Source information: Source: RMDB library OK1LIB, as collected in RNAgym. The record gives the reactivity of an RNA of 177 nucleotides to DMS and 2A3. Conditions: 150 mM KOAc, 10 mM MgCl2 and 150 mM bicine (pH 8.5), 24 C. 2A3 adducts were read by reverse transcription with SuperScript II with manganese. For DMS the reverse transcriptase was MarathonRT. The 2A3 profile rests on 2,554 reads.
[RMDB]
RNA sequence: GGGAACGACUCGAGUAGAGUCGAAAAGGGCGCGCUGCUGGGUGCCGGAGACCGACUGGUUGCCGCGCGCAGCCUGUUUGGCUCGUGUUUCGUGGUGUGCAGCGAGAUCCUGCCGCGCUGGGGGGUGUCCUGUAUUUCCGUUCGCGGAAAUACAGGAAAAAGAAACAACAACAACAAC
Reactivity to DMS in 0.01 (KOAc 150mM, MgCl2 10mM, bicine 150mM(pH8.5), 24C), signal-to-noise 2, nucleotides 027 to 126: g020g010g010c040g000c050g010c010u000g020c030u000g000g000g020u000g000c010c030g040g000a090g020a140c020c030g020a050c000u010g000g000u000u000g000c010c050g010c200g030c110g010c030a030g020c000c000u000g000u010u010u010g010g000c030u000c050g030u030g000u010u010u000c030g030u010g020g010u020g020u030g000c030a010g020c030g000a090g000a090u010c030c020u000g030c040c010g000c020g020c020u000g000g000g000g000g000g000u010g020
Reactivity to 2A3 in 0.01 (KOAc 150mM, MgCl2 10mM, bicine 150mM(pH8.5), 24C), signal-to-noise 4, nucleotides 027 to 126: g040g010g010c010g000c020g020c080u080g030c030u070g030g040g150u130g050c020c020g040g000a030g020a150c010c020g030a040c020u020g000g070u030u070g020c010c000g170c000g030c090g000c100a010g000c000c000u060g070u080u070u230g010g000c000u000c010g050u080g030u110u110u070c090g020u090g040g010u080g030u070g040c000a000g000c010g000a040g000a050u050c010c010u030g040c020c020g010c010g000c070u020g000g020g000g030g020g020u070g020